[RMDB]
RNA sequence: GGGAACGACUCGAGUAGAGUCGAAAAGUGCGCACACCGGCGCGGCGGCCUCCGGUGACGCGGUGACCGCGCCUAUGCAGGGCACCGUAGUUAAGUUCGCGGUCGAAGAAGGGCAAGAGGUCGUGGCGCAUCAGUACCCAUUCGUGGGUACUGAUGCAAAAGAAACAACAACAACAAC
Reactivity to 2A3 in 0.01 (KOAc 150mM, MgCl2 10mM, bicine 150mM(pH8.5), 24C), signal-to-noise 1, nucleotides 027 to 126: g060u060g000c040g010c030a000c000a040c080c070g050g000c020g000c040g000g040c000g000g030c050c020u000c030c030g000g040u030g010a050c020g000c000g000g030u030g020a010c010c000g050c020g060c050c010u160a150u300g050c080a110g010g010g000c040a050c010c000g060u190a220g040u070u160a090a000g030u000u040c020g000c030g030g140u060c020g020a090a020g070a070a030g060g020g000c010a020a000g020a030g000g010u010c000g010u030g040g040c030
Reactivity to DMS in 0.01 (KOAc 150mM, MgCl2 10mM, bicine 150mM(pH8.5), 24C), signal-to-noise 2, nucleotides 027 to 126: g030u000g000c060g020c030a160c110a090c090c070g000g000c090g010c010g000g020c030g010g000c010c010u000c050c070g010g000u000g020a060c050g000c040g000g000u020g010a040c020c000g000c060g020c210c160u010a040u000g000c040a150g020g010g010c020a010c030c010g030u030a050g020u000u020a040a110g000u000u010c090g020c070g010g000u000c070g020a060a100g010a130a080g020g000g020c060a130a110g000a020g000g020u010c040g030u000g010g010c100
Structure probing data (2A3 and DMS) for a 177-nucleotide construct. It was measured as part of the RMDB library OK2TST. The 2A3 profile rests on 1,515 reads.